Structure probing data (2A3 and DMS) for a 207-nucleotide construct. Values cover nucleotides 27 to 156. The DMS profile rests on 2,077 reads. The 2A3 profile rests on 654 reads.

RNA sequence: GGGAACGACUCGAGUAGAGUCGAAAAGAUGAAAUAUUUAACAAAAGUCUGAAAUCAAUCGAACUUUGCUUUACCUUUUGAUCAAAGUGUAAAUCCAGUUUCGUUUAGCAUGAUCUCAUCGCAUGAUCUCAUUGCAUGAUGUCAUGCUAAAGUUGGACAAACCUGCUCUAUUCGUAGAGCAGGUUUGAAAAGAAACAACAACAACAAC
Reactivity to 2A3 in 0.01 (KOAc 150mM, MgCl2 10mM, bicine 150mM(pH8.5), 24C), signal-to-noise 2, nucleotides 027 to 156: g040a010u220g000a000a070a000u300a100u260u300u300a170a080c160a020a140a050a030g070u040c090u140g090a090a020a120u180c150a100a030u030c070g030a010a010c000u090u080u160g020c000u000u000u020a020c000c000u030u010u050u100g140a100u060c080a010a000a000g040u090g000u100a010a030a030u020c030c010a050g040u040u030u040c020g000u000u050u020a000g000c000a000u000g000a000u000c000u000c010a020u010c090g040c000a010u040g070a170u040c190u070c200a040u140u160g000c000a020u000g000a000u020g000u000c080a000u000g030c000u010a000a000a000g010u010u030g010g000a000
Reactivity to DMS in 0.01 (KOAc 150mM, MgCl2 10mM, bicine 150mM(pH8.5), 24C), signal-to-noise 1, nucleotides 027 to 156: g000a100u010g010a090a100a160u010a080u000u000u000a060a080c080a050a030a050a130g000u010c010u000g020a030a090a120u010c250a080a200u000c000g020a010a020c070u000u000u000g050c080u010u010u000a030c030c020u000u030u000u010g030a200u000c130a040a040a080g040u010g000u000a020a050a090u000c000c020a080g040u000u000u000c050g020u000u000u000a010g000c000a020u000g030a020u000c300u000c020a010u000c290g040c010a020u000g020a160u020c240u010c090a060u000u000g020c010a080u010g010a040u000g030u000c000a020u000g030c000u000a000a010a020g020u000u010g040g030a120